[RMDB]
RNA sequence: GGGAACGACUCGAGUAGAGUCGAAAACCCGUUUUGUUCGCAAAACGGGACUCAUCUUUGCUUGGCAGCAUAGCAGGUGUUGGCUGGACUGCUGGCAUAUCCUUGGAGGCAGUUUCGACUGCCUCAAUCAACUAGUGUGAUUCGUCACACUAGUUGAAAAAGAAACAACAACAACAAC
Reactivity to DMS in 0.01 (KOAc 150mM, MgCl2 10mM, bicine 150mM(pH8.5), 24C), signal-to-noise 7, nucleotides 027 to 126: c010c000c000g010u000u000u010u000g010u000u010c190g030c000a010a000a010a010c010g000g000g010a120c060u000c130a090u010c130u000u000u000g020c000u010u010g020g000c020a020g010c120a140u000a030g010c020a080g010g020u000g000u010u010g020g010c000u000g010g010a140c010u000g000c000u000g000g000c010a030u000a060u010c070c050u000u010g010g010a020g010g010c000a010g010u000u000u010c160g010a030c010u000g010c000c000u010c000a010a060
Reactivity to 2A3 in 0.01 (KOAc 150mM, MgCl2 10mM, bicine 150mM(pH8.5), 24C), signal-to-noise 6, nucleotides 027 to 126: c000c000c000g000u010u000u000u000g020u010u050c190g000c110a000a000a000a000c010g000g010g030a060c020u040c060a220u020c080u090u060u030g020c020u080u220g070g020c010a010g020c030a080u090a080g000c020a050g080g190u180g130u300u250g200g040c010u010g010g060a120c000u000g000c000u010g020g000c010a020u040a070u150c030c020u010u100g190g000a010g000g000c010a000g000u020u060u130c140g090a030c000u010g000c000c000u000c000a000a000